[RMDB]
RNA sequence: GGGAACGACUCGAGUAGAGUCGAAAAGAUAUGGAGCAAGAACUACUAUAACACGCUCAUCGAUCAUAUUUUAUCUCGGAAACGAGAUAAAAUAUGGGAGAGCGUGAUAUAGCUUGCUCCUAAGUCAGGUAUAUAGUUCGUUCGCGAACUAUAUACCAAAAGAAACAACAACAACAAC
Reactivity to DMS in 0.01 (KOAc 150mM, MgCl2 10mM, bicine 150mM(pH8.5), 24C), signal-to-noise 2, nucleotides 027 to 126: g010a020u000a300u010g000g000a020g020c010a010a000g010a090a020c040u030a300c000u000a000u010a010a050c000a000c000g020c000u000c000a190u000c120g010a060u010c000a000u000a000u000u000u000u000a010u000c010u010c010g000g000a040a030a100c000g000a000g020a000u000a000a000a000a010u010a010u000g010g000g000a070g000a010g010c000g040u000g000a020u000a000u000a000g000c000u000u000g000c000u000c000c000u000a000a040g000u000c010a160
Reactivity to 2A3 in 0.01 (KOAc 150mM, MgCl2 10mM, bicine 150mM(pH8.5), 24C), signal-to-noise 3, nucleotides 027 to 126: g010a010u080a010u120g000g000a000g000c020a050a000g010a070a060c100u220a030c010u010a300u000a060a030c000a010c010g000c020u010c040a300u280c090g120a150u260c000a010u010a010u000u000u000u000a000u000c000u000c000g000g060a060a070a030c020g010a000g010a010u010a000a010a000a010u000a000u000g020g300g020a030g000a000g000c000g000u010g010a000u010a010u000a020g000c000u010u000g000c010u000c000c000u000a000a000g020u000c070a020
This 177-nucleotide RNA was probed chemically with DMS and 2A3. Values cover nucleotides 27 to 126. Conditions: 150 mM KOAc, 10 mM MgCl2 and 150 mM bicine (pH 8.5), 24 C.